[RMDB]
RNA sequence: GGGAACGACUCGAGUAGAGUCGAAAACCAAGAGACGGACGACUUUCCCCCAUUGGUUGGGAAAAGUCCCGGAACCAGGAAAUGGGAAAGAGACGGUAGAAAAGAGCGAGCCUCCCAGUUUUCGAGUAAAGGCCCUUCUUCGGAAGGGCCAAAAGAAACAACAACAACAAC
Reactivity to 2A3 in 0.01 (KOAc 150mM, MgCl2 10mM, bicine 150mM(pH8.5), 24C), signal-to-noise 1, nucleotides 027 to 129: c000c000a000a000g080a000g000a000c030g000g000a060c090g060a030c030u090u000u000c000c120c000c000c000a060u020u160g080g000u070u140g000g000g000a000a110a000a050g030u010c000c000c000g020g010a020a050c040c000a020g000g030a000a080a090u130g010g010g030a030a010a000g010a000g000a000c110g000g030u030a060g010a050a080a000a010g060a000g100c150g020a020g020c000c000u000c000c000c000a010g030u000u000u010u120c050g010a080g000u080a000a070a010
Reactivity to DMS in 0.01 (KOAc 150mM, MgCl2 10mM, bicine 150mM(pH8.5), 24C), signal-to-noise 2, nucleotides 027 to 129: c030c060a100a070g000a100g070a060c080g000g000a030c140g000a070c070u000u000u040c030c000c000c130c000a220u140u050g080g020u000u030g080g000g020a000a040a080a070g010u000c020c060c070g000g050a080a100c010c010a120g010g000a040a000a170u030g010g030g000a110a030a060g030a120g000a000c200g000g070u050a060g000a120a080a050a120g000a120g050c060g000a090g000c110c000u100c020c000c010a080g000u000u000u000u000c080g060a090g020u000a070a030a090
The record gives the reactivity of an RNA of 170 nucleotides to 2A3 and DMS. For DMS the reverse transcriptase was MarathonRT. For 2A3 the reverse transcriptase was SuperScript II with manganese. The data come from the RNA Mapping Database (RMDB), library 15KLIB. Reactivities are rounded to 0.1 and cut off at 0 and 3. The reactions ran in a buffer of 150 mM KOAc, 10 mM MgCl2 and 150 mM bicine (pH 8.5), at 24 C.